[RMDB]
RNA sequence: GGGAACGACUCGAGUAGAGUCGAAAAUGGAUAUCUCAAUAUGAAUUACAAUAUGAAUUACAAUAUGAUCCUGUGUCACUUUUACUGAUAGAUUAUAGUGAUUCGAGGAGAAUGCCUGUAGCUUUACUCACACGGAAUAAAUCCGGUAGUCUCCAUCAUGACACAAUUGUUUCGACAAUUGUGUCAUAAAAGAAACAACAACAACAAC
Reactivity to DMS in 0.01 (KOAc 150mM, MgCl2 10mM, bicine 150mM(pH8.5), 24C), signal-to-noise 2, nucleotides 027 to 156: u000g000g000a150u000a110u000c050u010c030a060a220u000a140u010g010a090a230u000u000a150c070a140a120u000a160u000g000a020a040u000u000a070c060a110a140u000a190u000g000a030u000c030c050u000g020u000g020u000c020a060c090u000u000u000u000a110c050u000g010a070u000a100g010a040u000u000a040u000a060g010u000g020a050u000u000c040g000a130g020g000a040g010a050a110u000g040c030c020u010g030u000a120g010c010u000u000u000a030c030u000c030a110c080a080c050g030g020a060a140u000a040a120a190u000c030c020g020g020u000a050g020u010c000u000c000c000a150u000c110
Reactivity to 2A3 in 0.01 (KOAc 150mM, MgCl2 10mM, bicine 150mM(pH8.5), 24C), signal-to-noise 3, nucleotides 027 to 156: u140g000g000a040u040a100u090c060u010c040a020a030u190a110u170g060a060a080u170u150a170c060a020a070u100a060u230g020a010a030u080u020a050c020a020a100u030a060u100g010a020u030c000c020u040g010u010g020u040c010a010c070u000u080u090u280a050c030u070g100a070u130a190g080a070u040u100a050u070a080g000u000g010a010u020u000c050g120a020g020g000a010g000a030a020u070g060c000c020u020g030u080a030g010c030u010u030u040a020c000u020c020a040c010a010c120g000g040a020a080u120a140a100a050u090c010c000g000g040u030a010g000u000c010u000c020c000a030u060c010